[RMDB]
RNA sequence: GGGAACGACUCGAGUAGAGUCGAAAACAGACUCGAGCGAAAGCUCGGCGAAAGCCGCGUACAUGUGACGGUCGGCGCGUGUACAGUCGACAGUUACUCUUCGGAGUAACAAUAGAAACAACAACAAAGGUGAUAUAUAUUUCGAUAUAUAUCACCUAAAAGAAACAACAACAACAAC
Reactivity to 2A3 in 0.01 (KOAc 150mM, MgCl2 10mM, bicine 150mM(pH8.5), 24C), signal-to-noise 9, nucleotides 027 to 126: c050a020g020a020c000u000c020g000a000g000c010g040a100a020a010g000c000u000c000g000g000c010g070a140a070a010g140c070c010g000c000g000u010a010c000a040u050g040u060g120a110c060g050g150u140c080g090g000c010g000c000g010u010g010u010a020c020a010g010u010c010g040a020c040a050g000u000u000a000c000u000c000u010u080c230g110g000a000g000u000a000a000c000a000a010u130a030g070a030a120a010c070a030a010c010a030a010c020a050a230
Reactivity to DMS in 0.01 (KOAc 150mM, MgCl2 10mM, bicine 150mM(pH8.5), 24C), signal-to-noise 4, nucleotides 027 to 126: c110a130g010a020c010u010c010g010a020g000c000g000a120a100a170g010c000u000c010g010g000c000g010a130a140a120g010c190c000g000c020g020u000a010c000a020u010g020u020g010a040c050g000g000u020c100g020g000c010g010c020g030u000g010u010a010c010a020g000u000c000g010a130c220a100g000u000u000a000c000u000c000u000u040c170g000g010a020g000u000a000a010c000a120a080u050a080g010a090a080a060c110a070a090c190a070a080c210a060a080
Structure probing data (2A3 and DMS) for a 177-nucleotide construct.
Values cover nucleotides 27 to 126.
For 2A3 the reverse transcriptase was SuperScript II with manganese.
The reactions ran in a buffer of 150 mM KOAc, 10 mM MgCl2 and 150 mM bicine (pH 8.5), at 24 C.